[RMDB]
RNA sequence: GGGAACGACUCGAGUAGAGUCGAAAAAGUGCACUAGGUACGCCUAGUGCACAUUCCAGGACAUACUGCUGAGGAUGUCAAAAAUGCAGUUGGACUCCUCAACUGGAUAGGCUACGGCCUAUCCAGAAAAAGACUUGGUUGUUCGCAACCAAGUCAACGAACAAAUGUUGUUCGCAACAUUUGUUCGAAAAGAAACAACAACAACAAC
Reactivity to 2A3 in 0.01 (KOAc 150mM, MgCl2 10mM, bicine 150mM(pH8.5), 24C), signal-to-noise 2, nucleotides 027 to 156: a000g000u010g000c010a020c000u010a000g000g000u040a050c200g060c010c000u010a000g000u010g030c010a000c000a000u000u000c000c000a000g060g060a070c060a100u280a080c030u090g060c040u040g010a050g000g050a090u270g130u210c130a000a040a080a010a100u200g040c070a010g050u090u130g010g010a030c020u000c010c010u040c050a060a060c020u000g000g000a000u000a000g020g000c000u020a020c300g010g010c000c000u000a000u000c000c000a000g010a000a020a000a000a000g000a010c000u000u000g030g020u000u020g000u080u040c100g000c080a000a000c000c000a000a000g000u010c000a000a000
Reactivity to DMS in 0.01 (KOAc 150mM, MgCl2 10mM, bicine 150mM(pH8.5), 24C), signal-to-noise 1, nucleotides 027 to 156: a100g000u000g000c010a010c000u010a000g010g000u000a110c300g000c020c010u010a000g010u010g040c010a000c010a000u000u000c000c020a170g010g010a130c020a070u010a060c030u010g010c040u020g020a090g030g010a060u030g030u000c010a050a040a110a120a150u000g020c070a230g090u000u000g000g010a190c130u010c010c000u010c030a050a100c000u010g030g000a010u000a020g030g020c000u000a070c300g080g000c000c010u000a000u010c000c000a000g010a000a050a070a090a130g000a060c000u010u000g020g030u010u010g000u000u000c300g020c000a060a010c000c000a010a010g020u000c010a000a040